[RMDB]
RNA sequence: GGGAACGACUCGAGUAGAGUCGAAAAACCGUGCUCCGGGGAACCGAAGUCGGUGGUUCCAAACUCGCCGGUCCGCAUGGCCUCCUGCACGCUCUCGCGGCGUUCGGUGGCGGCGCUCAUGCGUCCACCGUAUCGAUAGGUUCGCCUAUCGAUACGGAAAAGAAACAACAACAACAAC
Reactivity to DMS in 0.01 (KOAc 150mM, MgCl2 10mM, bicine 150mM(pH8.5), 24C), signal-to-noise 4, nucleotides 027 to 126: a060c010c000g010u010g000c010u000c020c020g000g000g010g030a100a100c020c010g010a040a030g020u000c030g000g000u010g010g000u000u000c010c030a110a100a130c120u000c110g010c040c040g010g020u000c090c060g020c020a040u000g000g010c030c020u010c040c010u000g000c090a030c020g010c020u000c040u020c280g010c100g000g000c030g010u000u000c050g010g010u000g010g010c120g000g000c040g000c090u010c090a040u000g020c010g010u020c030c080a170
Reactivity to 2A3 in 0.01 (KOAc 150mM, MgCl2 10mM, bicine 150mM(pH8.5), 24C), signal-to-noise 3, nucleotides 027 to 126: a010c010c000g030u070g030c020u010c030c010g040g000g000g110a070a080c020c010g020a060a010g100u090c090g050g040u090g020g000u030u000c020c000a060a110a110c080u080c050g080c050c030g030g000u020c050c050g000c030a030u030g080g000c000c000u030c000c010u040g010c080a010c030g000c000u010c000u100c160g090c140g010g000c000g010u030u030c050g030g040u100g040g030c110g010g020c040g000c020u180c060a050u140g010c020g030u000c000c020a050
Description: The record gives the reactivity of an RNA of 177 nucleotides to DMS and 2A3. For 2A3 the reverse transcriptase was SuperScript II with manganese. It was measured as part of the RMDB library OK2TST. For 2A3, 5,214 sequencing reads were counted. The reactions ran in a buffer of 150 mM KOAc, 10 mM MgCl2 and 150 mM bicine (pH 8.5), at 24 C.